[RMDB]
Overview: The record gives the reactivity of an RNA of 177 nucleotides to 2A3 and DMS. Values cover nucleotides 27 to 126. It was measured as part of the RMDB library OK1LIB. The reactions ran in a buffer of 150 mM KOAc, 10 mM MgCl2 and 150 mM bicine (pH 8.5), at 24 C. The DMS profile rests on 843 reads.
RNA sequence: GGGAACGACUCGAGUAGAGUCGAAAAACACAGAACCACUAAGCAUGCUUAGGAAUUGUGACGCCAUAAAAGCAGCCUUACGUUCUGAGACGAAUGAUCCCCGUCUUAUGAGCAGUAUCCUUGAUAACCUACGCCUCAUGUUCGCAUGAGGCGUAGGAAAAGAAACAACAACAACAAC
Reactivity to 2A3 in 0.01 (KOAc 150mM, MgCl2 10mM, bicine 150mM(pH8.5), 24C), signal-to-noise 2, nucleotides 027 to 126: a000c010a020c000a010g040a000a030c020c000a100c080u020a010a000g010c110a080u220g050c020u010u040a040g020g040a060a040u140u120g130u120g020a000c000g110c000c000a110u110a070a300a000a030g030c050a000g000c000c040u130u030a150c220g050u020u000c000u000g000a010g020a000c070g090a010a080u150g030a120u050c000c000c000c000g000u000c030u060u140a210u130g080a000g030c030a010g080u110a080u030c000c000u000u050g090a030u120a150a020
Reactivity to DMS in 0.01 (KOAc 150mM, MgCl2 10mM, bicine 150mM(pH8.5), 24C), signal-to-noise 1, nucleotides 027 to 126: a050c110a210c080a040g020a100a120c000c070a040c140u000a000a080g000c030a140u000g000c000u000u000a030g000g000a150a130u010u050g030u040g050a000c130g000c000c000a000u000a020a000a060a040g000c000a090g040c300c070u020u000a120c120g000u000u000c090u000g000a160g000a020c100g000a020a050u010g000a080u000c230c040c010c080g020u040c050u000u030a070u000g000a070g000c150a000g010u000a010u020c030c000u030u110g000a090u110a160a130